[RMDB]
RNA sequence: GGGAACGACUCGAGUAGAGUCGAAAAAGAAAUAAAGCGUACGAAGAUGGACGUACGCAACCAGUGCGUACAGGAAUCGCACAUCCAGCGGUCUAAGGAGAGCGCAAAACCAAAUAAUAGAAAAAAAUCAUCUCUACUAGUUCGCUAGUAGAGAUGAAAAAGAAACAACAACAACAAC
Reactivity to DMS in 0.01 (KOAc 150mM, MgCl2 10mM, bicine 150mM(pH8.5), 24C), signal-to-noise 1, nucleotides 027 to 126: a050g000a120a050a070u010a060a090a050g010c000g030u000a030c040g010a120a090g010a130u040g040g010a260c000g000u000a010c000g010c010a030a070c050c100a170g050u000g000c040g020u000a150c140a160g000g000a150a070u000c000g010c000a000c000a070u030c010c090a080g000c040g000g000u000c030u000a070a080g020g000a090g030a090g040c090g000c050a060a020a160a100c110c070a050a040a060u010a010a090u000a060g010a000a000a040a040a100a100a080
Reactivity to 2A3 in 0.01 (KOAc 150mM, MgCl2 10mM, bicine 150mM(pH8.5), 24C), signal-to-noise 1, nucleotides 027 to 126: a020g020a050a000a010u080a050a080a030g040c010g000u000a020c020g060a090a040g170a180u210g070g000a060c000g000u020a000c000g020c020a000a000c010c000a060g000u000g010c040g010u020a040c110a170g180g130a080a000u050c000g010c010a000c000a000u000c000c000a010g020c060g070g010u000c010u030a020a050g140g020a070g160a010g120c030g020c010a000a000a000a190c050c010a180a040a000u300a180a040u180a130g190a120a120a010a000a000a000a050